This 177-nucleotide RNA was probed chemically with DMS.
[RMDB]
RNA sequence: GGGAACGACUCGAGUAGAGUCGAAAAGAUAUGGACUUUCAAGAAUUAGAGGACGAUGAAAUAUCGUAACAUCACAUCGGAAACGAUGUGUGGAUAUGGAGUCCCUAAUUCUUGAAAGUCCUAAGUCGACUAAUAGGGCGUUCGCGCCCUAUUAGUCAAAAGAAACAACAACAACAAC
Reactivity to DMS in 0.01 (KOAc 150mM, MgCl2 10mM, bicine 150mM(pH8.5), 24C), signal-to-noise 1, nucleotides 027 to 126: g010a130u030a300u000g000g020a000c020u000u000u010c010a030a000g000a030a000u000u010a010g000a280g040g030a000c020g000a130u000g000a140a170a010u000a000u000c010g030u010a060a300c170a060u020c010a050c010a000u000c010g010g020a190a100a220c000g000a010u000g000u000g060u010g010g010a060u000a000u000g010g000a170g000u000c000c000c020u000a000a000u000u000c000u030u000g000a000a010a010g000u000c000c010u000a000a050g050u020c080
It was measured as part of the RMDB library TTRINS. The DMS profile rests on 817 reads. The RNA was probed in 150 mM KOAc, 10 mM MgCl2 and 150 mM bicine (pH 8.5) at 24 C.